This 177-nucleotide RNA was probed chemically with DMS and 2A3. The DMS profile rests on 3,336 reads. Conditions: 150 mM KOAc, 10 mM MgCl2 and 150 mM bicine (pH 8.5), 24 C. For 2A3, 2,143 sequencing reads were counted. Reactivities are given for positions 27 through 126.
RNA sequence: GGGAACGACUCGAGUAGAGUCGAAAAUUAACACCGUAGAUGUAGAAAUUAAUGUGUCCUGUUAACGAGACCUCUUGUAAUUAGAGUAUAGGAAGUAACAGUGCAAUAUCAACUUCCGAGUUAACCAAUCACCUCCAUACUUCGGUAUGGAGGUGAUAAAAGAAACAACAACAACAAC
Reactivity to DMS in 0.01 (KOAc 150mM, MgCl2 10mM, bicine 150mM(pH8.5), 24C), signal-to-noise 3, nucleotides 027 to 126: u010u020a160a110c070a040c040c120g020u010a040g020a100u000g010u000a030g000a110a070a090u000u000a110a030u020g000u030g010u000c030c010u000g000u010u030a000a010c020g000a180g010a140c300c020u000c020u040u000g010u070a110a130u040u030a010g000a020g010u040a080u020a160g000g010a000a000g020u000a050a090c240a090g000u000g000c240a010a120u050a060u020c020a040a060c000u000u000c000c000g000a100g020u010u000a010a020c020c160a060
Reactivity to 2A3 in 0.01 (KOAc 150mM, MgCl2 10mM, bicine 150mM(pH8.5), 24C), signal-to-noise 3, nucleotides 027 to 126: u130u040a050a000c020a040c040c090g060u080a050g030a100u100g050u120a100g170a080a140a070u210u170a080a050u220g120u020g030u020c000c000u020g000u030u000a040a000c010g000a000g050a150c000c000u020c000u020u010g090u300a090a050u180u090a020g000a000g040u010a020u070a170g000g020a000a000g010u010a090a000c000a110g090u030g130c110a090a000u050a110u300c030a010a020c000u040u030c020c000g000a000g050u000u000a090a000c090c030a030